Background
Chemical mapping of a 207-nucleotide RNA with 2A3. The data come from the RNA Mapping Database (RMDB), library RNAMAK. The reactions ran in a buffer of 150 mM KOAc, 10 mM MgCl2 and 150 mM bicine (pH 8.5), at 24 C.

RNA sequence: GGGAACGACUCGAGUAGAGUCGAAAAUUGUAGUUCGCUACAACCUGCUCCUAAGUCGAAGACGACGAUCUCCUGAGGAGCAACAGCUAUCGGAAACGAUAGACAUGCUCCUUAGGAGGGAGUCUUCGAUAUGGAAUAUACACUGAUUCGUCAGUAACCCCCAGAAGAAUUUCGAUUCUUCUGGGGGAAAAGAAACAACAACAACAAC
Reactivity to 2A3 in 0.01 (KOAc 150mM, MgCl2 10mM, bicine 150mM(pH8.5), 24C), signal-to-noise 2, nucleotides 027 to 156: u040u050g000u000a010g030u050u120c230g000c120u000a020c030a070a090c000c030u020g060c030u030c010c000u090a150a040g010u000c010g010a000a000g000a000c030g020a050c020g000a010u010c000u000c000c000u000g000a000g010g000a000g060c000a000a020c040a010g040c000u000a000u000c010g040g000a130a020a060c000g000a000u000a010g040a050c010a050u030g000c000u000c000c000u000u000a010g010g000a000g000g000g000a000g010u000c000u000u000c000g000a000u010a030u060g020g000a030a060u250a100u200a080c130a010c150u140g010a050u120u130c150g080u120c140a020g000u300a110a120